Source information
The data come from the RNA Mapping Database (RMDB), library OK1LIB. Chemical mapping of a 177-nucleotide RNA with 2A3. The RNA was probed in 150 mM KOAc, 10 mM MgCl2 and 150 mM bicine (pH 8.5) at 24 C.
[RMDB]
RNA sequence: GGGAACGACUCGAGUAGAGUCGAAAAAACGCAGAAGGCUUUCACUUCCGGGCUGUCGAUAUCCUGAAAGGCCUUCGGCCAGGCCGGCCAGCCCCAGCGCAGCGGGUCCUGUUGUACCUGCCAGGCGAUUAGUAAUCCCUUUCGAGGGAUUACUAAUAAAAGAAACAACAACAACAAC
Reactivity to 2A3 in 0.01 (KOAc 150mM, MgCl2 10mM, bicine 150mM(pH8.5), 24C), signal-to-noise 2, nucleotides 027 to 126: a000a010c140g010c050a060g010a120a000g040g010c030u090u110u100c120a120c070u170u040c060c020g000g040g030c020u040g080u120c020g040a050u020a080u200c010c020u060g080a090a060a030g080g020c000c030u130u060c000g010g010c000c000a050g030g050c020c020g000g000c000c000a020g000c000c000c000c000a030g000c010g000c000a000g040c020g030g030g030u030c020c020u020g010u040u000g000u010a020c000c000u010g000c020c000a080g070g000c000g010